[RMDB]
RNA sequence: GGGAACGACUCGAGUAGAGUCGAAAAGAAAUUACGUUUCCUUUACAAUUCUCAAACCGGGAUCAAGAGAAGCAAAGCAUCCCUCAUAUCCACGAUGGAGGGUGUCGUGGAGUAUACUGUACCAAAAAGAGCGAACACGGCUUCGGCCGUGUUCGAAGAAAUGAUCCUGGUUCGCCAGGAUCAUUUCAAAAGAAACAACAACAACAAC
Reactivity to 2A3 in 0.01 (KOAc 150mM, MgCl2 10mM, bicine 150mM(pH8.5), 24C), signal-to-noise 2, nucleotides 027 to 156: g020a030a060a020u210u110a050c060g010u020u010u020c030c000u080u050u080a090c070a110a140u090u010c050u060c070a110a100a140c050c060g030g020g000a010u070c020a090a030g040a030g050a090a060g040c100a090a000a080g050c020a060u030c000c070c000u080c050a110u130a030u070c010c000a000c020g000a000u060g050g090a080g040g020g040u100g000u010c000g000u020g000g000a000g030u000a000u000a000c150u120g100u100a060c020c050a040a130a060a040a000g050a020g090c030g040a000a000c020a000c000g010g000c040u070u080c200g070g000c010c000g000u000g000u000u000c020g000a000a000